[RMDB]
RNA sequence: GGGAACGACUCGAGUAGAGUCGAAAAAGCGGCACUUACGAGUGCCGCAGUUGAUGAGCACAUUCUUUUCUGAUUUAAUGAAGAAAGUGGCCAGGUCUGAGGUAGACGUCGCGCUACGGCGCGACGACCUAAAUGGCGCUUUCGAGCGCCAUUUAGGAAAAGAAACAACAACAACAAC
Reactivity to 2A3 in 0.01 (KOAc 150mM, MgCl2 10mM, bicine 150mM(pH8.5), 24C), signal-to-noise 1, nucleotides 027 to 126: a030g070c000g080g030c170a010c000u000u000a130c300g070a050g000u000g000c000c000g000c000a000g000u000u150g000a110u080g030a000g030c000a000c000a150u010u000c050u090u000u160u160c130u150g100a300u090u190u300a260a160u200g000a000a040g000a000a000a140g070u030g080g030c140c000a080g020g000u170c040u000g220a050g000g080u100a000g000a030c000g000u000c000g040c000g140c030u000a060c290g130g050c000g000c000g000a000c000g000a000
Structure probing data (2A3) for a 177-nucleotide construct. The reactions ran in a buffer of 150 mM KOAc, 10 mM MgCl2 and 150 mM bicine (pH 8.5), at 24 C.